[RMDB]
RNA sequence: GGGAACGACUCGAGUAGAGUCGAAAAACAAGCCUGCCUGGGAGGACAGACGAUCAGCCCUGGCUGUCCCUCAGGAGCGGGGGGCCUCCAAGGCACACUGCCCACUGGGUCAAGGAGUAUCCAGGAGAGUACACGGUAUUUUCGAAUACCGUGUACUAAAAGAAACAACAACAACAAC
Reactivity to 2A3 in 0.01 (KOAc 150mM, MgCl2 10mM, bicine 150mM(pH8.5), 24C), signal-to-noise 9, nucleotides 027 to 126: a000c060a030a030g100c010c010u020g020c020c000u010g010g010g020a250g040g000a040c000a020g050a040c060g060a130u140c080a030g040c000c020c010u040g040g000c000u000g010u010c010c000c000u010c010a040g070g040a030g030c050g010g010g000g000g010g010c000c000u060c030c010a040a050g020g010c040a020c010a010c060u090g010c000c010c000a040c020u030g010g000g010u030c050a100a110g130g010a060g070u090a020u030c010c000a010g020g060a090g040
Reactivity to DMS in 0.01 (KOAc 150mM, MgCl2 10mM, bicine 150mM(pH8.5), 24C), signal-to-noise 5, nucleotides 027 to 126: a140c130a060a060g000c060c100u020g000c010c000u010g000g000g000a110g000g000a050c020a050g020a120c130g010a110u040c110a080g010c060c020c040u050g010g000c020u000g000u000c010c000c000u010c020a040g000g020a050g000c110g010g020g010g010g010g000c030c020u010c060c010a080a140g000g010c040a080c070a070c050u010g010c010c010c010a130c090u010g010g010g000u010c040a150a160g010g010a130g010u000a020u000c010c000a050g000g010a140g000
Chemical mapping of a 177-nucleotide RNA with 2A3 and DMS. Conditions: 150 mM KOAc, 10 mM MgCl2 and 150 mM bicine (pH 8.5), 24 C. Reactivities are given for positions 27 through 126.